[RMDB]
Structure probing data (DMS) for a 207-nucleotide construct. The RNA was probed in 150 mM KOAc, 10 mM MgCl2 and 150 mM bicine (pH 8.5) at 24 C. Source: RMDB library OK3TST, as collected in RNAgym.
RNA sequence: GGGAACGACUCGAGUAGAGUCGAAAACUAAAACAGAAUUUUGAGCUUGCUGUAUAGUAAGCUCAUACCAAACAACGAAAGGAUCAAAAAAUGGAAUUAGCACGUAACGCGGUUUAUGGCUUACACCUUAAUAAAGGCGGCAAAGGCUCAAGUUAUGAAAUAACAUGGGCUUCGGCCCAUGUUAUUUAAAAGAAACAACAACAACAAC
Reactivity to DMS in 0.01 (KOAc 150mM, MgCl2 10mM, bicine 150mM(pH8.5), 24C), signal-to-noise 1, nucleotides 027 to 156: c000u010a120a090a140a240c060a150g010a060a200u030u000u000u010g010a000g050c000u000u000g000c000u020g000u000a060u030a020g010u000a000a000g020c000u010c050a020u000a090c070c030a070a110a100c020a030a160c050g020a080a050a120g070g050a240u010c070a000a000a050a080a110a070u030g000g000a070a140u000u010a110g010c030a090c050g000u000a040a060c040g050c070g050g030u000u000u020a110u010g040g000c000u000u000a020c070a080c000c040u000u000a060a080u010a060a070a060g010g000c040g020g050c130a070a110a040g040g020c010u010c020a040a060g020u000u000a040u000g030